Chemical mapping of a 177-nucleotide RNA with DMS and 2A3. The 2A3 profile rests on 24,050 reads.
[RMDB]
RNA sequence: GGGAACGACUCGAGUAGAGUCGAAAAGCGGUAACGCGGGUUCGAAUCCCGUAGGGGGUACCUGCGACGCGGUAUCGCGGAGCACACAACACAGCAAGGCCCUGUGGCGCAGUUGGUUAGCGCGCCGAUAAUCAUGUAACUUCGGUUACAUGAUUAUAAAAGAAACAACAACAACAAC
Reactivity to DMS in 0.01 (KOAc 150mM, MgCl2 10mM, bicine 150mM(pH8.5), 24C), signal-to-noise 9, nucleotides 027 to 126: g020c020g020g010u000a030a060c030g020c010g010g010g010u000u000c120g000a300a050u000c000c000c010g010u010a080g010g010g000g010g010u000a040c040c030u000g000c020g010a140c020g030c010g010g000u000a030u000c010g020c020g010g010a180g010c050a070c090a070c060a020a070c080a060c080a040g000c050a090a090g000g010c020c020c030u000g010u010g010g010c010g020c010a090g020u000u000g010g000u010u010a100g010c090g000c010g010c010c020g000
Reactivity to 2A3 in 0.01 (KOAc 150mM, MgCl2 10mM, bicine 150mM(pH8.5), 24C), signal-to-noise 8, nucleotides 027 to 126: g030c020g010g050u050a060a010c040g000c010g030g000g010u060u080c040g060a080a080u040c020c020c010g020u130a110g030g050g000g000g040u050a080c010c030u030g020c010g020a040c010g010c030g000g060u140a100u250c010g000c010g020g010a040g030c030a020c000a000c000a060a130c050a020c020a040g060c030a050a070g050g010c010c000c010u090g060u120g040g000c010g000c020a070g020u120u120g090g050u070u090a040g020c020g000c000g000c040c000g000
The data come from the RNA Mapping Database (RMDB), library OK2TRN.